[RMDB]
RNA sequence: GGGAACGACUCGAGUAGAGUCGAAAAGGCAAGAAUAGAAUUGCUCAUAUCGAGGGUGACACUUCAGGCCGUUUGCUAUAGUUGUUUGGUUUGUGGCCUGGUGGCGGAAACGGCGGUGUGUUAUGGCCAAUAUUAAUUAAUUCGUUAAUUAAUAUUGAAAAGAAACAACAACAACAAC
Reactivity to 2A3 in 0.01 (KOAc 150mM, MgCl2 10mM, bicine 150mM(pH8.5), 24C), signal-to-noise 3, nucleotides 027 to 126: g050g000c020a020a010g070a170a110u160a140g070a100a110u120u020g000c010u000c070a010u030a020u060c050g020a040g010g040g000u050g010a010c010a000c010u070u060c010a010g000g010c010c000g010u020u030u040g010c020u020a030u020a150g030u000u030g010u030u030u030g030g000u010u030u040g020u010g010g000c000c000u000g000g000u010g010g000c000g020g000a060a010a010c000g000g010c000g010g000u020g000u000g000u000u070a070u070g030g000c020
Reactivity to DMS in 0.01 (KOAc 150mM, MgCl2 10mM, bicine 150mM(pH8.5), 24C), signal-to-noise 8, nucleotides 027 to 126: g000g010c020a030a030g010a150a150u040a130g010a110a110u010u010g010c020u000c080a020u020a080u020c060g000a060g010g010g010u020g000a070c050a030c040u010u020c030a030g010g010c010c010g010u000u010u000g010c050u000a060u020a070g000u000u000g000u010u000u010g010g000u010u000u000g010u010g000g000c020c010u000g000g010u010g000g000c040g000g000a060a050a070c100g010g000c020g000g010u000g010u000g010u000u010a080u010g010g010c170